[RMDB]
RNA sequence: GGGAACGACUCGAGUAGAGUCGAAAAUAAGCCCAGACUUAUGAGAGAGUGGUUACCUCUCAGCCCCUCCACCUUGGGGUGCCCUAUUCGGAGCACUGCAGUUCCCGAUAGAAAGGCUAAGAACCUCCGAUAUCUUUUAGUUCGCUAAAAGAUAUCGAAAAGAAACAACAACAACAAC
Reactivity to DMS in 0.01 (KOAc 150mM, MgCl2 10mM, bicine 150mM(pH8.5), 24C), signal-to-noise 5, nucleotides 027 to 126: u020a120a120g010c010c010c020a140g010a300c080u010u000a040u000g010a050g000a030g000a020g000u000g010g010u000u000a170c220c000u000c010u000c010a040g000c020c010c000c010u010c220c140a070c240c170u000u000g010g010g010g030u000g000c000c010c010u000a090u010u000c250g000g000a060g010c030a040c170u010g010c160a150g000u000u000c040c010c020g020a040u010a030g000a110a100a070g000g010c010u010a070a040g010a040a050c000c000u000c140
Reactivity to 2A3 in 0.01 (KOAc 150mM, MgCl2 10mM, bicine 150mM(pH8.5), 24C), signal-to-noise 2, nucleotides 027 to 126: u080a020a020g040c020c000c000a020g050a070c060u120u090a020u090g000a010g000a000g000a000g000u020g010g010u050u030a020c010c000u030c000u010c000a010g000c010c000c000c000u040c060c040a230c040c020u050u070g000g010g000g000u010g010c000c010c000u010a040u010u040c030g020g020a020g000c050a040c180u300g010c030a050g010u030u020c000c030c000g010a000u000a010g040a050a130a000g010g000c010u040a070a020g060a130a030c010c000u020c040